The record gives the reactivity of an RNA of 207 nucleotides to DMS and 2A3. 2A3 adducts were read by reverse transcription with SuperScript II with manganese. It was measured as part of the RMDB library RNAMAK. For 2A3, 8,374 sequencing reads were counted.
[RMDB]
RNA sequence: GGGAACGACUCGAGUAGAGUCGAAAACGCUGGGUGACGUAACUAGGAGCAACAGCGUCUGAAGCGCGCACGGACGACAUGCUCCAUUACACAACCUGUGCUGAAGCGCGCACGGCAACCGAAAGGUGCGAAACUCCCCCUCUUCGGAGGGGGAGAAGUUAUUGACUUGGUUCGCCAAGUCAAUAACAAAAGAAACAACAACAACAAC
Reactivity to DMS in 0.01 (KOAc 150mM, MgCl2 10mM, bicine 150mM(pH8.5), 24C), signal-to-noise 1, nucleotides 027 to 156: c110g000c010u000g010g040g050u020g000a070c140g010u000a050a000c210u000a120g060g000a060g030c000a140a110c090a090g040c000g000u000c000u010g030a060a040g010c050g060c000g030c010a300c000g060g010a060c040g000a080c070a190u050g000c010u000c020c010a110u010u000a020c010a190c130a010a080c030c000u000g040u000g000c000u000g000a060a060g030c070g020c020g000c010a300c030g040g030c010a020a060c000c010g010a110a100a210g000g030u000g040c000g010a090a090a160c010u010c030c030c000c000c000u000c000u000u010c300g040g030a030g030g010g010g010g010a000g000a000a060
Reactivity to 2A3 in 0.01 (KOAc 150mM, MgCl2 10mM, bicine 150mM(pH8.5), 24C), signal-to-noise 6, nucleotides 027 to 156: c020g010c000u030g020g010g010u030g110a090c090g000u040a040a040c120u100a300g010g010a010g000c050a060a170c120a220g040c020g000u000c010u040g060a210a040g010c000g000c000g000c010a010c020g010g000a000c020g020a050c070a160u300g000c000u000c010c010a020u010u030a020c090a010c010a040a100c010c010u020g010u020g000c010u020g020a140a040g000c010g000c000g000c010a010c020g010g010c010a010a030c000c000g030a070a010a020g030g000u030g020c020g040a050a050a060c000u010c010c010c000c010c010u000c010u010u040c190g110g000a000g000g000g000g000g000a000g000a000a000